[RMDB]
RNA sequence: GGGAACGACUCGAGUAGAGUCGAAAAGCUGUGCAGUUUUCUAGGAACAUCUGUAAUAUACACAAUGUGAAAUCUGAUGUAGCGUCUGGAUGUAACAGGACCGUCCUAUGUUCAAGUAUCAUUUCCCCUACUGCUAAAGACUUGACACGGUCCUCUAACUAACGAUUCAGUUCGCUGAAUCGUUAGUAAAAGAAACAACAACAACAAC
Reactivity to DMS in 0.01 (KOAc 150mM, MgCl2 10mM, bicine 150mM(pH8.5), 24C), signal-to-noise 2, nucleotides 027 to 156: g030c000u000g000u010g000c030a130g020u000u020u000u000c050u010a200g040g010a160a100c030a060u000c030u000g020u000a100a090u000a110u000a060c000a070c080a080a060u000g010u000g020a120a090a110u010c070u020g030a070u010g030u000a070g010c080g020u000c050u020g000g000a060u000g010u000a060a160c070a050g040g000a020c000c010g000u000c080c070u010a100u000g000u020u000c030a030a060g000u000a070u010c070a120u000u000u000c020c010c000c100u000a070c040u000g040c070u000a070a080a100g000a030c040u000u000g010a110c090a040c020g000g000u000c000c010u000c020u010a100
Reactivity to 2A3 in 0.01 (KOAc 150mM, MgCl2 10mM, bicine 150mM(pH8.5), 24C), signal-to-noise 4, nucleotides 027 to 156: g040c050u030g020u050g070c040a070g010u050u060u150u070c090u190a110g050g040a060a030c000a020u020c040u040g040u120a140a110u100a040u070a140c050a030c060a140a120u170g030u080g120a060a070a060u070c060u040g020a070u030g030u040a030g050c020g070u030c060u090g020g020a040u030g020u080a100a060c030a140g000g000a010c000c000g040u070c050c070u140a130u130g040u050u040c000a010a000g000u050a060u210c070a090u060u050u070c000c010c000c000u060a100c020u010g040c000u030a110a040a060g020a030c000u020u020g000a000c010a000c040g000g000u010c010c000u030c000u020a010